RNA sequence: GGGAACGACUCGAGUAGAGUCGAAAACGCGAUGGAUACGUCCAUCGCGAAUCCGUCCAAGCCGCGGACGUUAAACUGUGGCACGGUUGUGCCUAGGUGCAACCCUGCUGACGAUGGCGGCACCCCUGCCCAAGCUACCGUCUACGGACGGUAGCAAUAGGUAAUGAUCCUUCGGGAUCAUUACCUAAAAAGAAACAACAACAACAAC
Reactivity to 2A3 in 0.01 (KOAc 150mM, MgCl2 10mM, bicine 150mM(pH8.5), 24C), signal-to-noise 1, nucleotides 027 to 156: c000g010c000g000a000u000g000g000a000u010a040c190g140u040c020c000a000u000c000g000c010g000a000a020u030c040c000g010u000c000c010a050a030g000c000c000g000c000g020g000a000c010g010u000u030a000a010a020c040u170g010u100g060g000c000a000c040g010g000u000u000g010u000g020c030c020u120a250g030g010u000g000c000a000a000c000c010c010u000g000c000u030g050a030c060g050a090u070g020g010c000g020g010c010a090c000c010c000c000u020g020c000c020c040a030a030g000c000u000a000c000c000g000u000c030u050a040c250g100g000a000c000g000g030u010a000g010c000a000a000